[RMDB]
RNA sequence: GGGAACGACUCGAGUAGAGUCGAAAACCGUUGCCGUUCGCGGCAACGGGAAGCAAGGAAGCAGCGCAACGAGACAAGACGAUAAUGAGAUCGCGCAUGCUGAAAAGCCACGCUUCGGCGUGGCUAAGACCGUUCAUUCUUUCGAGAAUGAACGGUCAAAAGAAACAACAACAACAAC
Reactivity to DMS in 0.01 (KOAc 150mM, MgCl2 10mM, bicine 150mM(pH8.5), 24C), signal-to-noise 2, nucleotides 027 to 126: c000c000g000u000u000g000c000c000g020u000u020c280g000c000g020g030c010a000a000c000g030g000g000a030a080g000c150a100a140g020g040a140a110g020c010a060g000c000g000c040a090a170c100g000a090g000a130c140a060a080g000a130c180g010a130u000a090a050u000g010a070g020a150u000c060g000c030g000c000a060u000g000c010u000g000a040a050a120a060g000c000c000a000c000g000c000u000u000c140g000g020c000g060u010g010g010c000u070a010a050
Reactivity to 2A3 in 0.01 (KOAc 150mM, MgCl2 10mM, bicine 150mM(pH8.5), 24C), signal-to-noise 1, nucleotides 027 to 126: c010c000g000u010u000g000c050c030g040u030u030c240g010c000g150g010c010a000a000c000g010g000g020a020a010g060c050a030a020g080g110a090a000g000c000a000g020c000g030c010a030a170c110g030a020g030a140c000a060a040g060a080c060g070a090u100a120a120u230g080a050g020a100u070c030g000c000g050c070a040u060g000c000u050g020a010a120a000a000g000c000c000a000c000g000c000u030u060c100g090g000c000g000u000g000g000c000u000a000a000